Structure probing data (DMS and 2A3) for a 177-nucleotide construct.
DMS adducts were read by reverse transcription with MarathonRT.
The reactions ran in a buffer of 150 mM KOAc, 10 mM MgCl2 and 150 mM bicine (pH 8.5), at 24 C.
[RMDB]
RNA sequence: GGGAACGACUCGAGUAGAGUCGAAAAUGAUCGACAGUAUGGCUGUGCUCGAUAUCUUCAUUCUUGCGGCUAAAGCGGCGGCGAACCACCACAAAGAAUACCGGAACGAAGAAGAUUGCCAGUACCGCCAGUUGGCGGUAUUCGUACCGCCAACUGGAAAAGAAACAACAACAACAAC
Reactivity to DMS in 0.01 (KOAc 150mM, MgCl2 10mM, bicine 150mM(pH8.5), 24C), signal-to-noise 2, nucleotides 027 to 126: u010g000a120u000c090g030a110c120a120g000u020a070u000g010g030c000u000g010u000g010c060u000c060g000a090u000a070u010c020u000u000c050a100u000u000c030u000u000g010c030g020g000c070u000a060a110a130g030c060g000g010c030g030g010c020g040a030a070c050c020a070c040c020a070c090a030a090a110g000a090a130u000a150c020c000g000g000a040a040c160g000a070a020g010a030a040g000a060u020u000g000c050c140a030g000u000a040c030c050g010
Reactivity to 2A3 in 0.01 (KOAc 150mM, MgCl2 10mM, bicine 150mM(pH8.5), 24C), signal-to-noise 2, nucleotides 027 to 126: u130g020a050u080c050g050a030c040a050g100u120a120u120g030g030c010u050g020u030g120c030u020c020g050a030u020a070u090c020u080u030c020a200u090u010c040u070u050g150c030g070g000c040u070a080a100a080g030c030g050g030c020g010g000c000g030a050a020c030c030a030c060c010a030c030a040a130a020g150a060a030u060a090c000c000g020g020a070a000c100g010a020a050g020a020a010g050a080u000u100g070c010c000a000g030u000a040c000c010g020